Chemical mapping of a 207-nucleotide RNA with DMS and 2A3.
RNA sequence: GGGAACGACUCGAGUAGAGUCGAAAAGUUGUGUAACUUCAUUUAAAUGAACUGAAACAAAUUUAAUACAAGUGGAUGUAGGAUAACCGUCCGUCCUUUACAUUGGUAUAAAAGUGAUCUAAAAUUCGGCAGGGACGAGUCUUCGGACUCGUCCCAACAUACGUAACAUGUUCGCAUGUUACGUAUGAAAAGAAACAACAACAACAAC
Reactivity to DMS in 0.01 (KOAc 150mM, MgCl2 10mM, bicine 150mM(pH8.5), 24C), signal-to-noise 2, nucleotides 027 to 156: g020u000u000g030u000g010u010a070a100c050u000u000c010a120u000u000u000a050a080a150u010g000a040a300c050u000g010a110a120a090c050a080a110a100u000u000u000a100a090u000a050c040a030a050g000u000g010g000a120u000g040u000a040g030g010a040u000a040a120c050c110g020u010c060c050g020u000c010c010u000u000u000a060c000a020u000u000g020g000u000a060u010a030a040a020a080g010u000g020a070u000c060u000a060a070a040a200u000u010c060g020g000c090a110g020g090g020a010c000g010a050g000u010c010u000u010c300g040g010a030c010u000c000g000u000c000c000c000a000a020
Reactivity to 2A3 in 0.01 (KOAc 150mM, MgCl2 10mM, bicine 150mM(pH8.5), 24C), signal-to-noise 4, nucleotides 027 to 156: g000u000u040g010u010g050u090a060a050c010u020u040c020a130u090u160u180a130a200a050u090g010a030a010c030u060g050a090a040a050c060a040a140a070u130u200u160a140a030u140a080c020a030a080g040u010g080g010a030u040g040u150a040g030g020a020u040a110a050c040c040g050u010c010c000g030u030c000c000u050u030u040a030c040a050u080u090g060g000u120a040u030a110a060a030a000g080u060g060a020u030c040u100a060a060a100a130u130u080c010g050g040c040a080g030g000g000a000c000g000a000g000u000c020u020u050c140g010g000a000c000u000c000g010u000c010c000c000a010a010